[RMDB]
This 207-nucleotide RNA was probed chemically with 2A3 and DMS. Reactivities are given for positions 27 through 156. For 2A3, 1,649 sequencing reads were counted. The data come from the RNA Mapping Database (RMDB), library PDB130. The RNA was probed in 150 mM KOAc, 10 mM MgCl2 and 150 mM bicine (pH 8.5) at 24 C.
RNA sequence: GGGAACGACUCGAGUAGAGUCGAAAAUUGCGACGCGAAAGCUAGCCAGAUGAUUGUCCCACUAGCCCAACAAGCUAGAACGGGACCGGUUGUUCCCCCAACCGUAGCCUAGGGAGGCAUGCGUGACUGGUAACGGUCAGGUGUGAAGCCCUCCCGACAUCUAGUCCAGGUUCGCCUGGACUAGAUGAAAAGAAACAACAACAACAAC
Reactivity to 2A3 in 0.01 (KOAc 150mM, MgCl2 10mM, bicine 150mM(pH8.5), 24C), signal-to-noise 2, nucleotides 027 to 156: u130u080g010c010g020a030c070g010c020g070a160a020a000g030c010u010a020g020c030c050a100g020a120u120g010a070u180u140g010u010c010c000c000a010c000u000a010g000c000c020c020a140a160c070a140a000g000c000u010a000g010a100a080c060g020g000g000a010c000c000g000g020u000u010g010u060u040c000c020c000c000c000a000a030c000c010g090u130a010g040c000c010u030a010g010g010g010a000g000g000c020a010u010g010c050g260u000g010a000c010u000g060g050u120a180a070c040g010g000u010c010a010g050g030u010g000u000g050a100a030g010c020c000c010u000c000c000c000g000a000
Reactivity to DMS in 0.01 (KOAc 150mM, MgCl2 10mM, bicine 150mM(pH8.5), 24C), signal-to-noise 1, nucleotides 027 to 156: u000u010g020c040g030a120c000g000c020g020a130a090a130g030c010u010a110g020c030c090a220g010a130u000g020a200u000u000g030u000c040c000c020a240c000u000a060g000c000c000c010a200a150c180a080a090g000c010u000a010g000a070a130c060g020g050g100a000c010c010g010g010u000u010g000u000u000c020c040c000c110c020a010a050c030c060g000u000a060g090c050c100u000a110g010g020g010a030g010g010c010a060u000g000c010g000u000g010a030c010u000g000g020u000a070a220c050g060g030u010c010a070g000g010u000g020u000g010a120a060g020c010c000c020u010c000c000c000g050a190